Notes
Conditions: 150 mM KOAc, 10 mM MgCl2 and 150 mM bicine (pH 8.5), 24 C. An RNA of 177 nucleotides, treated with 2A3 and DMS and read out base by base. DMS adducts were read by reverse transcription with MarathonRT. 2A3 adducts were read by reverse transcription with SuperScript II with manganese.
RNA sequence: GGGAACGACUCGAGUAGAGUCGAAAAUGCCUGUCUGUCGCGCUCUCUGCACCCUCCGAUCUCUCUCUUCUAUCGCAUGCGCAGGAGCGGAUACCCACUUGUACGUCUUCCUCCCGGAUAACCUCCAAAUAAGAUGGCUAUUCGUAGCCAUCUUAUUAAAAGAAACAACAACAACAAC
Reactivity to 2A3 in 0.01 (KOAc 150mM, MgCl2 10mM, bicine 150mM(pH8.5), 24C), signal-to-noise 8, nucleotides 027 to 126: u110g030c010c000u030g030u070c020u030g060u040c020g000c000g010c070u000c000u020c010u030g020c020a070c010c010c000u040c030c030g070a130u020c020u000c000u010c010u010c020u130u020c030u080a090u070c030g030c070a050u090g040c020g010c040a020g030g020a020g010c000g000g000a020u080a090c010c010c000a030c010u020u070g040u070a040c030g020u000c000u020u020c000c010u020c000c010c010g010g000a030u040a070a050c000c010u020c020c010a000
Reactivity to DMS in 0.01 (KOAc 150mM, MgCl2 10mM, bicine 150mM(pH8.5), 24C), signal-to-noise 8, nucleotides 027 to 126: u020g010c010c020u000g010u010c050u000g010u010c040g010c050g010c040u000c030u010c030u010g010c060a140c060c040c020u000c060c030g000a060u010c030u010c030u010c030u010c030u010u000c060u010a080u010c080g020c090a080u010g000c070g010c050a070g000g010a080g020c050g020g010a090u010a100c030c020c010a100c060u000u000g020u020a060c090g010u010c010u000u000c030c030u000c010c020c020g010g000a100u010a060a080c020c020u010c020c020a070